[RMDB]
RNA sequence: GGGAACGACUCGAGUAGAGUCGAAAAUCGCAUUAAGGGCUCCCAUUACGCGAUGAAGAGCGGCAUGCUGGCGGCGGAGAGUGCCUUUGAAGCCAUCAAUGCGGAUGCACAAUCGACGGCUGGUGUGAUUUACGGGAUCAUUCGUGAUCCCGUAAAUAAAAGAAACAACAACAACAAC
Reactivity to DMS in 0.01 (KOAc 150mM, MgCl2 10mM, bicine 150mM(pH8.5), 24C), signal-to-noise 5, nucleotides 027 to 126: u010c030g010c020a060u020u010a100a060g000g010g000c050u010c020c010c010a120u020u020a090c130g010c030g010a070u020g020a140a110g010a120g030c050g010g010c040a050u020g020c040u000g000g000c030g020g010c060g000g000a080g010a140g020u020g010c050c060u020u000u000g010a120a050g030c010c030a110u020c090a070a060u020g000c030g000g000a080u010g000c030a080c070a090a130u020c050g010a090c050g000g000c020u000g020g000u000g000u000g000
Reactivity to 2A3 in 0.01 (KOAc 150mM, MgCl2 10mM, bicine 150mM(pH8.5), 24C), signal-to-noise 5, nucleotides 027 to 126: u030c020g010c040a050u100u140a120a100g070g020g000c010u030c000c010c010a030u060u170a040c070g040c040g050a100u090g120a100a040g070a030g070c040g040g020c040a050u140g030c010u050g050g000c050g040g010c060g020g000a030g000a000g060u080g080c000c000u080u040u080g070a070a000g020c020c010a070u090c070a080a040u120g010c000g020g020a040u080g000c040a000c030a070a110u070c040g050a050c020g080g010c000u010g000g000u060g020u010g070
Chemical mapping of a 177-nucleotide RNA with DMS and 2A3. For 2A3 the reverse transcriptase was SuperScript II with manganese. Reactivities are given for positions 27 through 126. Conditions: 150 mM KOAc, 10 mM MgCl2 and 150 mM bicine (pH 8.5), 24 C. It was measured as part of the RMDB library OK1LIB. For DMS, 12,486 sequencing reads were counted.